[RMDB]
RNA sequence: GGGAACGACUCGAGUAGAGUCGAAAAGCAUCCGACAUGGUGCUGGGAUGCCAAUAUCAGCACAAGGCUUUUGCCGAAUUACACCAGAAGAACGCAUGGCUGGUGAAUCAUCCAUGCAUCGUCUCAUAGAGUCGACGAGACGUAAGAUGUCGACAGACCACGGGUACGAUUUCGAUCGUACCCGUGGAAAAGAAACAACAACAACAAC
Reactivity to 2A3 in 0.01 (KOAc 150mM, MgCl2 10mM, bicine 150mM(pH8.5), 24C), signal-to-noise 1, nucleotides 027 to 156: g000c000a000u010c040c000g060a100c120a250u120g070g000u000g030c020u000g020g000g010a040u040g070c000c000a160a020u140a040u140c050a000g010c000a010c000a090a200g000g000c060u110u150u020u150g030c060c070g000a030a030u030u070a070c050a080c040c000a010g050a090a000g090a220a020c070g000c040a000u000g000g010c000u000g000g020u070g030a090a130u060c040a000u000c030c000a000u020g000c000a000u050c040g000u010c020u000c000a090u070a170g040a070g080u000c020g040a040c020g000a000g010a020c020g000u000a020a010g050a040u150g000u020c010g000a000c000a050g110a040